[RMDB]
RNA sequence: GGGAACGACUCGAGUAGAGUCGAAAAAAGAAAUUGCAGAGCAGGGUAGGUGAUAAUUGGCAGAGCAGGGAUAAUCCCCCUUACUGGGCAAACAGAAACUGGGAAAACCUUCAGCCACAGUGGGAGGUGAGUCCUGGGUAGCAUAUAGGAGCCAAAGCUGUCAGAUUAUGUUCGCAUAAUCUGACAGAAAAGAAACAACAACAACAAC
Reactivity to 2A3 in 0.01 (KOAc 150mM, MgCl2 10mM, bicine 150mM(pH8.5), 24C), signal-to-noise 1, nucleotides 027 to 156: a000a000g070a030a080a010u150u080g000c020a000g020a010g070c050a040g010g000g070u040a030g000g050u010g030a010u070a250a090u110u110g030g000c060a050g000a020g040c060a020g000g000g030a010u080a110a130u150c090c020c010c000c000u000u120a010c000u010g000g010g030c010a120a130a000c000a020g150a090a050a000c030u060g010g000g000a000a100a000a060c030c000u040u000c060a020g000c010c010a170c000a030g050u060g000g000g000a070g000g000u050g030a020g100u030c000c010u010g000g000g020u030a030g000c020a000u100a000u030a110g020g020a000g110c020c000a080a050a000g060
Reactivity to DMS in 0.01 (KOAc 150mM, MgCl2 10mM, bicine 150mM(pH8.5), 24C), signal-to-noise 1, nucleotides 027 to 156: a010a090g000a090a020a140u000u010g030c030a110g020a110g020c050a030g000g020g030u000a080g000g100u020g040a100u000a030a150u000u000g020g040c070a190g000a160g080c070a090g000g030g010a060u000a070a300u000c030c010c020c110c000u010u000a120c020u010g000g000g000c080a100a120a200c050a100g010a100a050a070c050u000g030g010g000a080a040a130a110c020c000u010u010c020a150g030c030c070a050c050a030g020u000g010g010g010a110g000g040u070g000a160g000u000c000c000u020g030g000g020u000a050g040c050a070u000a040u000a070g060g000a070g000c020c020a000a020a190g020